RNA sequence: GGGAACGACUCGAGUAGAGUCGAAAAUGUCUGGGCCAGCUCGUUGACGGUGAUGCGGUUCUGAACGGCUACGGCGAUGGGCAGGAUCAGCUCCGAUGCGAUCGGCGCCACCACCACGCCGCCGAUCGUGGUCAGGAGCGUUCGCGCUCCUGACCACAAAAGAAACAACAACAACAAC
Reactivity to 2A3 in 0.01 (KOAc 150mM, MgCl2 10mM, bicine 150mM(pH8.5), 24C), signal-to-noise 2, nucleotides 027 to 126: u070g060u030c010u010g010g020g000c000c010a030g020c000u050c040g030u000u030g040a040c030g000g070u140g090a110u130g050c030g060g060u110u070c220u240g100a110a020c040g140g010c000u040a030c040g020g010c020g020a050u020g030g000g000c050a020g010g010a040u030c000a000g030c010u030c020c010g050a100u190g080c030g020a010u010c000g000g000c000g000c010c020a070c050c010a060c040c000a100c090g000c020c010g000c000c000g020a010u030c010
Reactivity to DMS in 0.01 (KOAc 150mM, MgCl2 10mM, bicine 150mM(pH8.5), 24C), signal-to-noise 3, nucleotides 027 to 126: u010g030u000c000u000g010g000g010c010c020a070g000c030u000c010g020u000u000g010a040c020g010g000u020g020a050u000g020c020g010g050u000u000c190u010g020a050a040c050g000g010c000u010a080c020g020g000c010g000a030u000g000g000g010c020a080g000g000a040u000c060a030g020c020u000c030c020g010a110u010g010c070g000a050u000c010g020g010c010g010c080c040a110c070c070a090c150c120a040c060g000c220c010g000c010c010g010a010u000c040